Structure probing data (DMS and 2A3) for a 207-nucleotide construct. 2A3 adducts were read by reverse transcription with SuperScript II with manganese. The 2A3 profile rests on 1,273 reads. The reactions ran in a buffer of 150 mM KOAc, 10 mM MgCl2 and 150 mM bicine (pH 8.5), at 24 C.
RNA sequence: GGGAACGACUCGAGUAGAGUCGAAAAGACGCACCUUAAAGUGAAGUUUAGUCUAGUCAAAUUUGUAAGUUUUGGAAGAUGAGCGGAAUUUGAUGAAAGAGUCAUCUUUGCUAAGUAUGUAGAGGUCUUUUUUGGGCUAUUUUUGGACAGGGGUUCAGAAUUACGUACUGUUCGCAGUACGUAAUUCAAAAGAAACAACAACAACAAC
Reactivity to DMS in 0.01 (KOAc 150mM, MgCl2 10mM, bicine 150mM(pH8.5), 24C), signal-to-noise 1, nucleotides 027 to 156: g010a080c030g040c020a070c090c040u030u000a120a100a110g020u020g020a060a120g010u010u000u010a100g000u000c020u010a240g030u000c030a040a020a050u010u000u020g020u010a040a200g010u010u010u010u010g030g020a110a120g020a090u000g020a070g030c020g010g020a020a080u000u010u010g000a050u020g000a080a080a120g000a070g020u000c020a040u000c010u020u000u000g000c060u000a040a090g020u000a030u010g020u010a090g010a110g010g030u000c000u010u000u010u000u010u000g050g000g020c030u010a020u010u000u000u000u020g050g010a080c020a070g010g010g000g030u000u000c060a180
Reactivity to 2A3 in 0.01 (KOAc 150mM, MgCl2 10mM, bicine 150mM(pH8.5), 24C), signal-to-noise 2, nucleotides 027 to 156: g020a010c020g000c010a020c020c000u100u140a140a060a000g010u020g080a080a020g010u030u100u150a030g020u000c010u020a010g010u000c020a030a010a080u110u080u140g080u200a070a070g020u020u040u130u160g050g020a060a020g020a060u000g000a010g020c060g010g020a020a020u050u060u070g020a020u020g060a040a130a070g040a020g030u020c010a020u020c000u050u020u020g020c020u040a080a050g040u050a100u130g030u030a030g010a020g000g020u040c000u070u060u040u020u110u110g030g010g010c010u050a110u070u160u000u050u070g000g000a020c020a040g010g020g000g000u030u070c020a030